[RMDB]
RNA sequence: GGGAACGACUCGAGUAGAGUCGAAAAUGUUUGAAAAUGCCUCACCGUUUUCCGAAUGUUGUAUGUUUAUUCAGAAACAUCCAGACAUGGUCCGGCCCAUCAGAUGAGUGGCAAGACAAGCUCAUCCAAACAUCGUGCAAUUCGUUGCACGAUGUUUAAAAGAAACAACAACAACAAC
Reactivity to 2A3 in 0.01 (KOAc 150mM, MgCl2 10mM, bicine 150mM(pH8.5), 24C), signal-to-noise 3, nucleotides 027 to 126: u070g060u010u000u140g060a040a060a000a010u090g030c010c010u000c030a020c020c020g010u010u020u080u010c010c010g060a080a060u050g000u080u040g020u040a080u020g010u020u050u030a170u090u130c080a040g170a030a050a000c000a000u040c030c000a070g010a060c000a030u050g020g010u020c010c000g000g000c000c040c050a050u060c030a050g010a010u010g000a000g020u030g010g050c070a100a000g100a130c030a030a000g000c000u000c010a020u000c020c010
Reactivity to DMS in 0.01 (KOAc 150mM, MgCl2 10mM, bicine 150mM(pH8.5), 24C), signal-to-noise 3, nucleotides 027 to 126: u000g010u000u000u000g030a040a070a090a070u020g020c030c010u020c030a050c070c000g010u010u020u010u020c010c020g030a150a080u010g010u000u000g000u000a050u010g010u000u000u000a100u060u010c160a110g020a030a040a010c010a000u010c040c020a100g000a050c090a050u020g030g020u000c030c000g000g020c010c030c010a060u020c090a110g010a020u000g000a040g000u000g020g030c170a080a110g010a090c130a050a180g030c000u000c010a040u020c010c200